[RMDB]
RNA sequence: GGGAACGACUCGAGUAGAGUCGAAAAAGAAAGAAGACAGCAAGGUUUCUGUCUUACUGGGGAAAGAUAACUCAGAAGAAAGAAAUUAUAUCAUGGAAAACUGAAGUUGACAACAUUCAGCAUGAAAGGGUUUACAAUAGUUCGCUAUUGUAAACCCAAAAGAAACAACAACAACAAC
Reactivity to 2A3 in 0.01 (KOAc 150mM, MgCl2 10mM, bicine 150mM(pH8.5), 24C), signal-to-noise 3, nucleotides 027 to 126: a000g130a000a040a040g070a020a060g040a010c090a000g070c050a090a110g120g020u030u050u000c020u000g090u000c000u000u010a170c000u040g000g000g000g040a040a110a120g180a100u120a140a090c000u000c010a000g020a020a000g010a010a120a010g030a000a040a010u120u090a120u040a000u050c000a010u060g010g010a200a000a000a020c010u010g000a020a000g020u130u090g060a060c080a050a000c010a120u020u020c000a030g030c000a020u010g080a100a040a000
Reactivity to DMS in 0.01 (KOAc 150mM, MgCl2 10mM, bicine 150mM(pH8.5), 24C), signal-to-noise 2, nucleotides 027 to 126: a070g000a100a040a150g000a080a000g020a070c110a030g000c110a020a110g030g000u000u000u000c000u010g000u040c000u000u000a080c000u030g060g000g000g010a100a100a170g000a150u050a010a180c030u000c000a040g040a020a000g000a010a040a000g000a040a010a020u060u010a080u020a080u010c030a000u000g020g020a030a120a080a300c030u000g000a000a030g000u000u020g000a100c150a060a040c090a070u000u010c000a000g000c000a030u000g000a070a090a070